[RMDB]
RNA sequence: GGGAACGACUCGAGUAGAGUCGAAAAGCAUGCACUACAUCGACGGCGAACGCGUAACCAAUAAGGUGCGCCUGGCUAAUAAAGGCGCUGGCGGUACGGUGCUGAAUAAAUCAAUGAUUGAGGCUAUUCUCGAUUACGAUUAUUCUGAAUACCUCGCUGCCUAACUCCUAUUCGUAGGAGUUAGGCAAAAAGAAACAACAACAACAAC
Reactivity to 2A3 in 0.01 (KOAc 150mM, MgCl2 10mM, bicine 150mM(pH8.5), 24C), signal-to-noise 1, nucleotides 027 to 156: g050c070a050u190g040c010a000c030u070a060c100a070u040c070g070a040c010g000g000c010g000a030a060c000g000c000g040u020a070a070c010c000a010a180u300a200a050g060g000u000g020c000g000c000c020u120g090g000c010u090a100a000u100a160a160a000g070g040c060g000c000u000g000g000c000g000g000u020a010c070g040g010u000g000c000u010g000a000a010u080a070a050a050u020c000a000a040u300g010a000u000u010g000a000g040g110c280u240a220u300u050c040u000c000g000a000u020u030a000c070g000a040u030u010a000u070u000c040u000g080a050a020u030a020c000c000u020c000g000c000
The record gives the reactivity of an RNA of 207 nucleotides to 2A3. For 2A3, 513 sequencing reads were counted. Values cover nucleotides 27 to 156. For 2A3 the reverse transcriptase was SuperScript II with manganese. The RNA was probed in 150 mM KOAc, 10 mM MgCl2 and 150 mM bicine (pH 8.5) at 24 C.